[RMDB]
RNA sequence: GGGAACGACUCGAGUAGAGUCGAAAACAUGGGACUUACAAAAUCUCUCAAUGCCUUGGCAGUCGGUUUGGCGUUUUUGUUCGUAGCGAUGAUGCUUUUCAUCUGACGCGACGUGAAGACCAAACGCGGUUUCAUAUACGUUCGCGUAUAUGAAACCAAAAGAAACAACAACAACAAC
Reactivity to DMS in 0.01 (KOAc 150mM, MgCl2 10mM, bicine 150mM(pH8.5), 24C), signal-to-noise 2, nucleotides 027 to 126: c130a080u000g010g010g000a040c060u040u020a110c250a080a030a100a120u000c080u000c010u000c100a040a090u000g020c030c030u020u010g000g000c050a070g010u000c070g010g030u000u000u000g020g020c020g000u000u010u000u000u010g000u000u000c030g030u000a060g020c280g010a070u000g000a040u000g020c300u010u020u000u000c010a010u020c020u010g020a220c020g000c010g000a020c030g010u000g000a040a060g020a070c000c000a010a050a040c070g010c160
Reactivity to 2A3 in 0.01 (KOAc 150mM, MgCl2 10mM, bicine 150mM(pH8.5), 24C), signal-to-noise 2, nucleotides 027 to 126: c030a090u080g040g000g000a010c030u080u100a060c140a030a100a050a070u080c030u020c000u020c050a040a100u060g050c000c010u000u060g080g010c020a030g050u070c060g090g020u000u000u000g060g000c060g040u010u040u060u020u250g060u090u000c020g010u010a000g030c020g020a000u010g010a000u060g140c090u200u080u070u070c020a000u020c000u020g030a020c010g010c000g000a000c030g060u080g060a040a010g060a050c000c000a010a000a010c090g000c070
Source: RMDB library RFMREP, as collected in RNAgym.
Structure probing data (DMS and 2A3) for a 177-nucleotide construct.
Values cover nucleotides 27 to 126.